RNA sequence: GGGAACGACUCGAGUAGAGUCGAAAAUGGCGCAAUCCUGGUUGGAAAAUGCCGCUGGGCAGAAAGUAGAUGGCCCCUUGUCUGCUUUACCCGCGAUACAGCGAAUUGAUGUGGGUCAGAAAAGCCAACUAUUACGGCAGUUCGCUGCCGUAAUAGUAAAAGAAACAACAACAACAAC
Reactivity to 2A3 in 0.01 (KOAc 150mM, MgCl2 10mM, bicine 150mM(pH8.5), 24C), signal-to-noise 1, nucleotides 027 to 126: u040g030g010c030g000c070a080a010u020c000c010u060g210g130u030u300g050g050a160a070a070a090u100g000c010c010g010c060u050g020g000g010c020a050g080a040a040a000g050u090a020g020a100u040g060g030c010c000c040c020u100u080g030u060c010u020g000c000u000u000u030a040c000c010c030g000c000g020a040u060a160c010a010g010c050g120a180a170u080u060g060a060u030g050u040g040g000g030u010c020a040g060a080a090a010a010g000c030c010a030
Reactivity to DMS in 0.01 (KOAc 150mM, MgCl2 10mM, bicine 150mM(pH8.5), 24C), signal-to-noise 2, nucleotides 027 to 126: u020g000g010c020g010c040a130a110u000c030c030u000g010g020u000u000g020g000a050a060a080a090u000g000c040c000g010c060u000g030g000g000c120a070g010a030a010a040g030u000a020g020a050u010g000g030c050c010c010c060u000u010g010u000c020u000g000c030u000u000u000a110c050c030c030g010c040g010a170u010a080c080a060g010c110g000a070a130u000u010g000a100u020g010u000g000g010g000u000c100a100g000a060a050a060a100g000c040c060a100